An RNA of 207 nucleotides, treated with 2A3 and read out base by base.
RNA sequence: GGGAACGACUCGAGUAGAGUCGAAAAGUACAUUUCGAUGUACGAUAACGGGGUCAUACAACAGCGCGGAGCGACGAUCUAUACUGAAGCCUCCACGGUAUAGGGAGCUCCCGACAUGUAUGACGGAGGCACCCAAUAGGUUGGUUUCGACCAACAAUGAGCACACCAAAUUCGUUUGGUGUGCUCAAAAAGAAACAACAACAACAAC
Reactivity to 2A3 in 0.01 (KOAc 150mM, MgCl2 10mM, bicine 150mM(pH8.5), 24C), signal-to-noise 1, nucleotides 027 to 156: g000u000a000c010a000u190u180u190c190g130a010u010g000u000a020c030g030a090u120a120a110c060g020g010g010g000u020c020a000u000a000c040a080a010c070a120g130c120g180c300g030g030a010g010c000g210a280c000g000a000u000c010u000a000u000a000c000u000g010a190a010g000c000c000u050c000c000a010c010g000g000u000a000u000a010g000g000g030a000g000c000u030c000c000c000g000a020c000a070u100g000u000a000u000g010a010c030g010g000a000g000g030c000a020c000c030c000a040a060u200a120g110g000u000u030g000g010u030u040u080c060g000a020c000c000a010a030c020a010a210
Source: RMDB library RNAMAK, as collected in RNAgym.
For 2A3 the reverse transcriptase was SuperScript II with manganese.